Conditions: 150 mM KOAc, 10 mM MgCl2 and 150 mM bicine (pH 8.5), 24 C. Chemical mapping of a 207-nucleotide RNA with 2A3. For 2A3, 850 sequencing reads were counted.
RNA sequence: GGGAACGACUCGAGUAGAGUCGAAAAACCAUUUGUUCGCAAAUGGUAAAAAGGGGUCUCCCAAUGAUGUGGAGCUGGCCACUGAAGCCUCCACGGUGGUCAGCGUUGAAAUUGAGGGAGACGGAGGCACCCAAAAAGUACUCGUUCGCGAGUACAAACAGACACCUGUAUUCGUACAGGUGUCUGUAAAAGAAACAACAACAACAAC
Reactivity to 2A3 in 0.01 (KOAc 150mM, MgCl2 10mM, bicine 150mM(pH8.5), 24C), signal-to-noise 1, nucleotides 027 to 156: a000c020c000a040u030u000u000g060u060u100c170g030c090a000a000a010u010g010g020u100a140a040a040a010a030g130g000g000g030u000c040u010c000c000c050a000a080u170g060a060u150g090u280g280g060a040g020c010u000g000g000c000c000a020c000u000g030a050a010g040c000c000u000c000c000a000c000g000g000u000g000g000u000c000a000g000c060g020u100u090g040a200a160a080u020u020g010a050g000g000g000a000g010a000c000g010g000a000g000g000c000a010c010c000c010a050a070a020a000a000g010u020a000c000u000c000g040u090u110c260g000c020g090a000g000u000a000c000a030a080